This 177-nucleotide RNA was probed chemically with 2A3 and DMS. For 2A3 the reverse transcriptase was SuperScript II with manganese. It was measured as part of the RMDB libraries RFM100 and RFMREP.
RNA sequence: GGGAACGACUCGAGUAGAGUCGAAAAUUUUGCAAUUUAGAGUUUGAAAUGAAAUUGUGUUUCCGGAUUAUACUCCAAACAUAUUAUUAUAUGCAAUCUCAUUUACUUUGAAACAUGAUCAAUGAAUCAGUGUCCUAUUAUUCGUAAUAGGACACUGAAAAGAAACAACAACAACAAC
Reactivity to 2A3 in 0.01 (KOAc 150mM, MgCl2 10mM, bicine 150mM(pH8.5), 24C), signal-to-noise 6, nucleotides 027 to 126: u150u160u040u040g030c000a010a000u010u000u020a050g010a020g030u030u170u300g120a030a040a010u010g010a030a030a030u020u030g020u020g030u040u040u090c080c020g000g000a050u120u140a060u270a210c050u000c000c010a040a100a040c030a050u080a030u120u100a050u100u090a100u070a030u140g030c010a010a020u000c020u000c020a010u020u020u030a030c030u050u050u050g060a050a120a090c030a040u060g030a040u080c080a060a130u130g140a040a060u030
Reactivity to DMS in 0.01 (KOAc 150mM, MgCl2 10mM, bicine 150mM(pH8.5), 24C), signal-to-noise 2, nucleotides 027 to 126: u010u020u000u010g000c100a120a080u000u000u010a030g000a020g010u010u050u000g000a020a000a000u000g020a010a040a060u020u010g010u000g000u010u000u010c080c220g010g010a020u010u020a090u020a110c210u010c000c010a070a070a090c020a030u000a030u000u030a060u020u010a070u020a040u000g000c000a000a010u020c040u020c000a030u040u000u000a070c020u000u010u000g000a030a010a090c070a050u010g000a080u040c080a050a070u010g010a080a150u000